[RMDB]
RNA sequence: GGGAACGACUCGAGUAGAGUCGAAAAGAGAUUUGGCCCUGUGAGCUGAAGCUGCUGGUCAACGACUGCCACAGCCACACAGCGGCAUUGGUGCACCAUUUGACCGGCCAGACAAUCACGAUAGAGACGAUAAUGACGGUUUCGACCGUCAUUAUCGAAAAGAAACAACAACAACAAC
Reactivity to DMS in 0.01 (KOAc 150mM, MgCl2 10mM, bicine 150mM(pH8.5), 24C), signal-to-noise 4, nucleotides 027 to 126: g000a160g000a140u010u010u020g020g010c020c020c020u020g030u000g000a130g020c090u010g020a090a120g000c050u000g000c050u010g000g000u000c060a040a020c230g010a110c210u000g000c030c070a100c110a100g000c000c030a080c100a110c190a100g000c120g010g020c040a070u000u000g000g000u000g000c040a050c090c050a170u000u000u000g000a040c060c010g000g020c030c080a060g000a080c080a060a110u000c050a040c060g020a110u000a100g010a100g000a160
Reactivity to 2A3 in 0.01 (KOAc 150mM, MgCl2 10mM, bicine 150mM(pH8.5), 24C), signal-to-noise 3, nucleotides 027 to 126: g080a010g000a050u170u110u180g080g000c020c040c030u050g030u020g030a060g010c100u030g040a060a010g090c020u020g000c040u030g000g040u020c020a040a030c100g110a060c060u040g000c020c010a030c020a030g010c040c000a040c000a010c030a050g110c080g020g010c010a010u040u120g030g010u080g000c030a040c050c000a100u060u020u030g000a000c000c000g040g000c030c010a010g010a020c040a040a070u030c030a010c070g050a040u080a140g110a000g020a050
Structure probing data (DMS and 2A3) for a 177-nucleotide construct. The reactions ran in a buffer of 150 mM KOAc, 10 mM MgCl2 and 150 mM bicine (pH 8.5), at 24 C. DMS adducts were read by reverse transcription with MarathonRT. Source: RMDB library OK2TRN, as collected in RNAgym.